[RMDB]
RNA sequence: GGGAACGACUCGAGUAGAGUCGAAAAGAUAUGGAUGCCCGUGGCGUCAACAGCAACCUUCCAUAUCGUAAUGUCGGAAACGACAUUACGAUAUGGAAGGUUGACAUGACGCACGGCAUCCUAAGUCGGAUGACAAAAUGUUCGCAUUUUGUCAUCCAAAAGAAACAACAACAACAAC
Reactivity to DMS in 0.01 (KOAc 150mM, MgCl2 10mM, bicine 150mM(pH8.5), 24C), signal-to-noise 2, nucleotides 027 to 126: g010a140u000a300u000g030g010a000u000g010c110c040c100g020u000g030g000c010g010u000c010a020a120c300a160g010c010a010a010c000c000u010u000c000c000a020u000a010u000c000g000u000a020a000u010g020u000c000g000g000a180a090a210c000g020a010c000a000u010u000a000c010g010a010u010a010u000g000g000a000a000g000g020u000u000g010a010c060a170u000g020a010c000g010c000a000c020g000g020c010a000u000c000c000u010a000a060g000u000c110
Reactivity to 2A3 in 0.01 (KOAc 150mM, MgCl2 10mM, bicine 150mM(pH8.5), 24C), signal-to-noise 1, nucleotides 027 to 126: g060a030u060a070u180g030g000a010u000g070c080c110c150g050u050g230g110c000g000u000c030a120a100c060a200g070c010a000a020c000c000u000u000c000c000a010u000a000u020c020g030u000a000a000u000g010u010c000g030g110a040a080a240c000g020a000c010a000u000u000a030c000g000a010u020a010u000g030g000a000a010g000g000u000u000g000a010c000a060u050g000a000c020g000c000a000c000g010g000c000a000u000c000c000u010a090a030g090u110c160
An RNA of 177 nucleotides, treated with DMS and 2A3 and read out base by base. The 2A3 profile rests on 4,373 reads. Reactivities are rounded to 0.1 and cut off at 0 and 3. For DMS, 2,472 sequencing reads were counted. For 2A3 the reverse transcriptase was SuperScript II with manganese.